This 177-nucleotide RNA was probed chemically with 2A3 and DMS.
2A3 adducts were read by reverse transcription with SuperScript II with manganese.
The 2A3 profile rests on 11,668 reads.
[RMDB]
RNA sequence: GGGAACGACUCGAGUAGAGUCGAAAACAGGAACUAGCGAAGAUGGUGAUAGGGAGGAUGUAGAUUCCGCCUCGUCCGCUCGUUGUCUUCGGGCCCGGGAGGUGGUGCUGCUGGACCAUGCGCAGCGCGACCGUAUAAUCUUCGGAUUAUACGGUCGAAAAGAAACAACAACAACAAC
Reactivity to 2A3 in 0.01 (KOAc 150mM, MgCl2 10mM, bicine 150mM(pH8.5), 24C), signal-to-noise 8, nucleotides 027 to 126: c050a020g050g050a040a030c050u060a070g040c030g070a080a040g040a090u050g000g060u070g050a090u090a090g050g010g000a030g040g000a050u070g040u100a040g020a160u180u030c000c000g020c000c000u010c010g080u040c000c000g010c010u010c010g050u050u090g150u090c110u120u060c010g010g000g020c000c050c000g020g020g000a020g000g010u020g000g030u040g000c030u010g000c010u030g040g030a050c020c020a050u100g020c030g000c040a020g010c030g000
Reactivity to DMS in 0.01 (KOAc 150mM, MgCl2 10mM, bicine 150mM(pH8.5), 24C), signal-to-noise 6, nucleotides 027 to 126: c110a110g010g010a060a050c060u020a100g010c040g010a060a060g000a030u010g010g010u010g000a060u010a070g010g010g000a090g010g000a040u010g010u030a080g000a110u020u000c020c010g010c020c000u000c020g010u020c030c080g020c040u000c020g000u010u010g010u010c140u010u010c030g000g000g010c040c090c050g000g000g000a040g000g010u010g010g010u010g000c020u010g000c020u000g000g010a130c080c070a060u020g000c090g000c040a050g010c070g010